RNA sequence: GGGAACGACUCGAGUAGAGUCGAAAAUAGUGAUUCGUCACUAAAUUCGCGUACUACUGCUGCUAGAACGGCACUACCCACCGUGGUCCCAAAUAGGACCACGAGGUGUCAGCGUUCUUGGACCAGCAGUAUCGCCGGUAGACGCCUUCGGGCGUAACAGUUUAAGGCUAUUCGUAGCCUUAAACUGAAAAGAAACAACAACAACAAC
Reactivity to 2A3 in 0.01 (KOAc 150mM, MgCl2 10mM, bicine 150mM(pH8.5), 24C), signal-to-noise 4, nucleotides 027 to 156: u080a000g000u000g020a000u060u050c250g040u020c160a000c020u040a060a070a110u240u200c070g020c000g070u060a110c020u010a000c000u020g000c000u000g020c010u020a000g010a020a000c000g200g020c120a040c040u110a060c010c010c040a090c080c000g000u010g010g000u040c020c020c010a180a290a090u300a130g000g010a000c000c000a000c000g000a010g010g000u060g030u070c090a060g100c010g070u020u000c000u060u070g130g040a200c110c020a010g020c010a020g000u000a020u060c000g010c020c010g020g040u110a050g010a100c000g010c010c010u070u080c190g080g000g000c000g010u010a050a050
Reactivity to DMS in 0.01 (KOAc 150mM, MgCl2 10mM, bicine 150mM(pH8.5), 24C), signal-to-noise 2, nucleotides 027 to 156: u000a010g010u010g020a030u000u000c260g040u000c010a010c000u000a050a030a300u000u000c000g050c000g010u030a050c060u010a010c010u010g070c000u000g010c030u000a020g000a030a040c000g020g000c020a040c010u000a010c020c000c010a300c150c000g030u000g000g010u000c010c000c010a080a140a200u010a020g000g010a020c000c000a010c000g040a000g040g000u020g010u000c020a210g040c020g010u010u000c000u010u000g040g000a040c200c010a010g000c000a050g000u000a000u000c030g030c020c020g000g010u000a140g000a010c000g030c010c000u010u020c250g050g080g020c000g000u010a030a110
The record gives the reactivity of an RNA of 207 nucleotides to 2A3 and DMS. The reactions ran in a buffer of 150 mM KOAc, 10 mM MgCl2 and 150 mM bicine (pH 8.5), at 24 C. It was measured as part of the RMDB library RNAMAK. For DMS, 3,923 sequencing reads were counted. 2A3 adducts were read by reverse transcription with SuperScript II with manganese. 2A3 is a SHAPE reagent: it acylates the 2'-hydroxyl of flexible nucleotides of all four kinds.